[RMDB]
Source: RMDB library OK1LIB, as collected in RNAgym. This 177-nucleotide RNA was probed chemically with 2A3. The RNA was probed in 150 mM KOAc, 10 mM MgCl2 and 150 mM bicine (pH 8.5) at 24 C. For 2A3, 387 sequencing reads were counted. Reactivities are given for positions 27 through 126.
RNA sequence: GGGAACGACUCGAGUAGAGUCGAAAACCGGCGACACGACCGAGGAUCUCGGGCCGAUCCGGUGAGCACGACGCCGGCCGCCGGAGUGCUCGACACGUCGGUGUUCAUCGCGACCGAAAGCGGCCGGGGACGAGACGCGGUUCGCCGCGUCUCGUCCAAAAGAAACAACAACAACAAC
Reactivity to 2A3 in 0.01 (KOAc 150mM, MgCl2 10mM, bicine 150mM(pH8.5), 24C), signal-to-noise 1, nucleotides 027 to 126: c000c000g060g060c040g030a010c000a050c190g180a060c000c070g000a100g070g060a300u100c050u030c020g110g070g000c110c000g030a040u040c090c000g030g010u110g000a000g000c000a000c000g060a020c040g000c000c000g010g000c000c000g000c000c000g000g000a050g000u000g000c080u110c070g030a030c040a000c110g080u140c010g060g090u030g060u130u060c060a100u050c000g070c030g110a080c080c000g140a090a050a000g000c000g000g000c010c000g000g000